[RMDB]
RNA sequence: GGGAACGACUCGAGUAGAGUCGAAAAUCACGUCCCGGAUGGUCUUCACCCCGGCGAUGAGGUAUCCGAUGUCCCCCGCCUCGAGACGCUCCACGGGAAGGCCCCGCAUCCUGAGGAUACCCACCUCAUACCCUGAGAUGUUCGCAUCUCAGGGUAUAAAAGAAACAACAACAACAAC
Reactivity to DMS in 0.01 (KOAc 150mM, MgCl2 10mM, bicine 150mM(pH8.5), 24C), signal-to-noise 1, nucleotides 027 to 126: u000c030a060c120g000u020c060c050c020g030g020a080u000g040g000u000c080u000u010c110a090c070c020c030c130g000g010c120g040a050u010g000a020g010g030u000a080u000c050c070g040a120u000g010u000c040c000c000c000c030g010c100c000u000c030g030a040g020a140c050g030c030u000c030c040a190c170g000g000g010a040a070g000g000c020c000c120c000g020c080a070u000c060c030u010g010a100g000g000a140u000a110c050c030c020a090c050c040u000c030